[RMDB]
RNA sequence: GGGAACGACUCGAGUAGAGUCGAAAAAUAUUCUCUUGCUGCGUAGGGUUCCCAAGCUGCCAAAAACUUUUAAAAAUUAGUGAUCUGUUCCCCAAACCCCCAUUCAAUAAGAAAGGUCUACCUGUAGCACUUACCUCUAGUUCGCUAGAGGUAAGUGAAAAGAAACAACAACAACAAC
Reactivity to DMS in 0.01 (KOAc 150mM, MgCl2 10mM, bicine 150mM(pH8.5), 24C), signal-to-noise 3, nucleotides 027 to 126: a120u030a070u030u020c020u000c010u010u020g020c030u010g020c050g020u030a090g000g000g000u000u000c000c010c020a040a060g010c040u010g000c000c020a030a050a070a130a080c090u020u000u020u030a050a050a060a070a110u020u020a090g010u010g000a050u000c060u010g020u000u000c020c000c000c050a030a090a200c050c010c000c000c010a070u010u000c050a050a080u050a040a090g010a050a100a060g000g020u010c010u000a050c020c010u000g000u020a070g020
Reactivity to 2A3 in 0.01 (KOAc 150mM, MgCl2 10mM, bicine 150mM(pH8.5), 24C), signal-to-noise 4, nucleotides 027 to 126: a000u110a130u130u030c010u000c010u000u100g000c030u040g020c020g060u090a060g000g040g000u040u070c000c000c000a000a000g000c010u040g040c010c010a020a050a070a090a090c130u170u200u200u280a090a110a090a090a110u190u150a070g030u010g110a060u020c100u080g060u020u020c000c000c000c020a000a050a050c010c030c000c000c000a020u040u060c040a050a080u100a150a040g090a100a050a000g040g000u000c030u080a100c020c000u040g050u080a020g020